This 207-nucleotide RNA was probed chemically with 2A3. Conditions: 150 mM KOAc, 10 mM MgCl2 and 150 mM bicine (pH 8.5), 24 C. Reactivities are given for positions 27 through 156. It was measured as part of the RMDB library OK3TST.
[RMDB]
RNA sequence: GGGAACGACUCGAGUAGAGUCGAAAAUGCCUGGGGACAGUCCUCCCCUGGGACCCCAGCUGGGGAGCCAGGCACAGCAGAUGAGUGCUGGAGAAGUGCCCAGGUCAGGGAGAGAGGAGCUGGGGUCCCUAAGGAGAGGCCAUCUUCUCUGCCUGUACUCGACUAGGUAUUUCGAUACCUAGUCGAGAAAAGAAACAACAACAACAAC
Reactivity to 2A3 in 0.01 (KOAc 150mM, MgCl2 10mM, bicine 150mM(pH8.5), 24C), signal-to-noise 1, nucleotides 027 to 156: u080g030c010c000u000g000g000g050g000a050c030a040g110u120c030c000u000c080c030c000c030u030g040g030g010a020c000c010c000c010a030g060c060u070g030g000g020g050a030g020c020c010a020g020g030c030a010c020a010g140c000a000g050a260u300g040a160g250u050g010c020u030g130g030a070g080a190a040g090u110g020c000c030c050a040g000g060u030c040a020g010g070g000a040g000a000g020a030g060g090a000g020c000u000g000g000g040g000u020c020c000c000u000a030a030g000g010a050g020a040g000g020c020c000a070u040c030u000u000c030u000c010u000g080c000c000u040g000u050a030